The record gives the reactivity of an RNA of 177 nucleotides to DMS.
The RNA was probed in 150 mM KOAc, 10 mM MgCl2 and 150 mM bicine (pH 8.5) at 24 C.

[RMDB]
RNA sequence: GGGAACGACUCGAGUAGAGUCGAAAAUUACUAGUCUGUGAUGAAUUGCUUUGACUUCUGACACCUCCUAUGAAAACUGCACGUGCAGUCUGAUUAUUUAGCAAGACUGAGGCUUAAAAUAAAUCAAUCCUAAAAUCCAGUUCGCUGGAUUUUAGGAAAAAGAAACAACAACAACAAC
Reactivity to DMS in 0.01 (KOAc 150mM, MgCl2 10mM, bicine 150mM(pH8.5), 24C), signal-to-noise 1, nucleotides 027 to 126: u020u000a130c020u000a100g010u000c030u020g020u000g020a090u010g000a130a050u000u000g000c050u010u010u010g030a050c030u020u000c010u000g000a150c130a080c100c020u010c050c030u000a020u010g000a020a060a160a090c060u010g030c000a170c300g020u000g010c010a050g000u000c030u000g000a080u020u000a100u010u000u000a060g020c060a060a030g000a080c080u000g000a080g010g020c040u000u000a080a040a060a080u010a050a020a040u000c110a060a110